[RMDB]
RNA sequence: GGGAACGACUCGAGUAGAGUCGAAAAAAGAUGAAAUGGAAAGACAGUGGCCUAAAGAUGCUUUGCAGACUAACUAGCAGCCCAGCAAGCCUUCAAUAUUUUGAGGCCAUCAUUGGUAUUAUUAUUACAUUUCUGUUGCCUAGGGAUUGAGCUGGGACUACGUACCACGAUUCGUCGUGGUACGUAGAAAAGAAACAACAACAACAAC
Reactivity to DMS in 0.01 (KOAc 150mM, MgCl2 10mM, bicine 150mM(pH8.5), 24C), signal-to-noise 1, nucleotides 027 to 156: a030a030g030a070u020g000a040a010a080u010g000g030a150a150a140g030a160c050a100g020u010g000g010c000c000u000a050a050a060g020a110u000g030c090u010u010u000g070c030a140g000a080c140u000a110a140c100u020a070g030c060a120g020c000c010c020a050g020c010a090a060g010c030c010u020u000c050a010a070u000a120u000u000u000u000g010a040g030g010c000c000a030u000c050a080u020u010g010g010u000a040u020u000a080u000u000a120u000u000a050c040a080u000u000u000c050u000g000u000u000g000c040c050u010a120g040g000g010a140u000u000g000a150g000c030u000g000g000g020a280
Reactivity to 2A3 in 0.01 (KOAc 150mM, MgCl2 10mM, bicine 150mM(pH8.5), 24C), signal-to-noise 2, nucleotides 027 to 156: a000a000g110a090u130g040a000a000a050u060g030g030a060a050a010g110a010c050a040g070u010g020g000c010c010u070a110a120a030g030a020u040g050c040u110u030u110g000c060a030g020a080c050u100a140a000c000u010a080g030c000a020g000c010c020c020a000g010c040a040a000g020c000c000u130u170c100a020a060u140a140u180u120u120u070g050a010g000g020c040c020a010u030c010a020u100u110g030g000u040a060u100u030a020u100u000a070u040u180a160c070a060u050u050u160c070u060g060u060u040g010c000c000u030a030g010g020g100a050u030u130g050a070g020c020u020g000g020g010a000